RNA sequence: GGGAACGACUCGAGUAGAGUCGAAAAACUGGGAACAUAUGAGAAAGCAUGAGCUCUAUCCAUCUAUCCAUCCCCUCCCAUUCGCUAGAAUGUUGCAGGUGGAGAUUUCGCUCUUAUGUUUUCUCGAGUACAGUACAACUUUCGAGUUGUACUGUACAAAAGAAACAACAACAACAAC
Reactivity to 2A3 in 0.01 (KOAc 150mM, MgCl2 10mM, bicine 150mM(pH8.5), 24C), signal-to-noise 9, nucleotides 027 to 126: a000c060u070g020g030g060a100a050c050a080u200a140u290g000a020g000a010a010a000g000c010a020u040g010a000g010c010u020c040u090a090u020c020c010a020u010c020u080a080u060c040c040a110u060c030c010c000c000u040c020c000c000a020u020u010c010g030c130u090a080g010a030a030u050g060u150u160g130c080a020g000g030u040g040g020a030g010a030u110u140u150c080g000c010u010c000u070u160a030u010g000u000u000u010u000c000u000c010g000a010
Reactivity to DMS in 0.01 (KOAc 150mM, MgCl2 10mM, bicine 150mM(pH8.5), 24C), signal-to-noise 8, nucleotides 027 to 126: a100c080u000g010g010g010a080a070c110a110u020a090u020g000a010g010a020a010a010g010c020a020u000g000a020g000c030u000c160u020a150u000c010c010a020u000c020u000a110u030c160c090a120u020c020c010c000c020u010c030c030c000a040u000u000c030g000c240u030a090g010a020a020u010g010u020u010g030c180a040g000g020u000g000g010a020g000a150u010u010u020c180g000c030u010c010u030u010a030u000g010u000u000u000u000c000u000c010g010a200